[RMDB]
RNA sequence: GGGAACGACUCGAGUAGAGUCGAAAAGAUAUGGAUCCCGUGUCGCGAGGAUCAUGUUGUAUCGGAAACGAUACACCAUGGGAGCGACACAGGGAUCCUAAGUCAAAGUAGCCCUUCGGGGCUACAACAAUCUCUAAAUCUUCGGAUUUAGAGAUUGAAAAGAAACAACAACAACAAC
Reactivity to DMS in 0.01 (KOAc 150mM, MgCl2 10mM, bicine 150mM(pH8.5), 24C), signal-to-noise 6, nucleotides 027 to 126: g010a040u010a300u000g010g000a000u000c000c000c000g020u000g010u000c010g020c000g010a110g020g010a050u010c000a000u000g010u000u000g010u000a000u000c000g010g000a170a130a240c000g010a010u000a000c000a010c010c000a010u000g000g000g000a050g010c000g000a020c000a000c000a040g040g000g000a010u000c000c000u000a000a090g010u000c040a110a140a200g010u000a000g010c010c000c000u000u010c260g030g010g000g000c000u000a000c000a060a230
Reactivity to 2A3 in 0.01 (KOAc 150mM, MgCl2 10mM, bicine 150mM(pH8.5), 24C), signal-to-noise 3, nucleotides 027 to 126: g040a030u100a050u200g000g000a000u020c010c010c010g000u010g000u000c020g010c060g080a300g080g030a040u030c010a010u000g020u000u010g010u010a000u010c010g030g020a100a040a040c010g010a000u010a010c000a000c010c000a000u000g000g010g020a040g000c000g000a000c000a000c010a010g000g010g000a000u000c000c000u000a040a000g000u000c020a020a070a150g000u000a010g000c000c000c000u000u040c260g080g000g010g020c000u000a000c000a000a000